[RMDB]
RNA sequence: GGGAACGACUCGAGUAGAGUCGAAAACGGUGAAGCUGACCGAUCCGCCGAUCACCCGCCAGCGCGGCGAACAACUGGCGCGCAGCCUGAUGGCGAAGGACGAACAGCAGUUCCGCGACUCGCUGCCGCGCCCAUCAUUUUUCGAAAUGAUGGGCGCAAAAGAAACAACAACAACAAC
Reactivity to DMS in 0.01 (KOAc 150mM, MgCl2 10mM, bicine 150mM(pH8.5), 24C), signal-to-noise 1, nucleotides 027 to 126: c040g020g000u010g000a120a090g000c020u000g000a120c140c040g060a190u000c020c040g010c040c030g010a090u000c140a040c070c000c040g050c040c000a070g020c040g030c100g030g060c050g010a100a040c140a100a080c120u000g000g020c010g020c120g040c040a110g000c010c060u010g030a090u000g010g000c030g000a120a020g020g010a100c080g000a140a120c080a030g050c100a130g040u000u000c020c030g030c110g000a100c070u010c040g010c040u000g010c150c000